The record gives the reactivity of an RNA of 207 nucleotides to 2A3. As a SHAPE reagent, 2A3 marks flexible, mostly unpaired nucleotides at the ribose 2'-OH. It was measured as part of the RMDB library OK3TST. Reactivities are given for positions 27 through 156. Values are in units of 0.01, from 0 to 300, in steps of 10.

RNA sequence: GGGAACGACUCGAGUAGAGUCGAAAAAGGGAAGGUUCUUGCCUGCCAAAUUAUUUAUCUUUGCAUGUAUGAAACACAGCAAUCCAGUGUGCUUAAUUUCCUACAGAGCUUUAGAAAUGAAACUGACACAAGGCCUCUUCUACCAAUGAAUAAAAAAGCUGAACUUGGUAUUCGUACCAAGUUCAGCAAAAGAAACAACAACAACAAC
Reactivity to 2A3 in 0.01 (KOAc 150mM, MgCl2 10mM, bicine 150mM(pH8.5), 24C), signal-to-noise 1, nucleotides 027 to 156: a000g030g000g010a030a010g000g000u140u230c000u000u020g040c050c070u000g100c050c000a020a070a020u090u060a020u050u130u040a230u000c030u000u020u040g010c000a000u000g000u000a000u010g020a000a000a000c020a020c040a030g010c000a030a030u160c120c180a110g070u120g060u000g210c000u000u050a090a020u070u040u000c000c000u000a000c000a000g050a070g050c020u110u040u050a050g020a000a060a000u120g030a110a060a030c020u020g020a000c010a010c000a020a010g040g000c010c010u040c040u020u020c000u030a070c090c000a050a030u260g030a070a010u300a220a040a040a160a040a000